Notes
The record gives the reactivity of an RNA of 177 nucleotides to 2A3.
RNA sequence: GGGAACGACUCGAGUAGAGUCGAAAAAUGGCAGAGAGUCGUUUCUAACAAAAACUAACAAUUGUUAUUGCUGUCUAAGCUUCAAAAGGGUAAUUUUAAAAUGGGAAGUUAAAGAACAAUUGGAGGACUCACGGUUACCUUUCGAGGUAACCGUGAGAAAAGAAACAACAACAACAAC
Reactivity to 2A3 in 0.01 (KOAc 150mM, MgCl2 10mM, bicine 150mM(pH8.5), 24C), signal-to-noise 1, nucleotides 027 to 126: a000u040g000g000c000a000g110a000g000a000g070u000c000g000u000u040u020c000u030a000a000c060a000a000a070a000a070c070u040a040a000c000a000a000u030u000g130u090u000a160u270u060g170c000u000g000u050c000u080a140a000g000c000u130u000c040a050a050a170a140g020g010g000u030a160a280u110u070u080u150a110a110a070a110u180g120g060g000a000a000g000u000u210a180a070a040g020a000a000c000a000a000u000u000g010g000a030g000g000a020

2A3 adducts were read by reverse transcription with SuperScript II with manganese.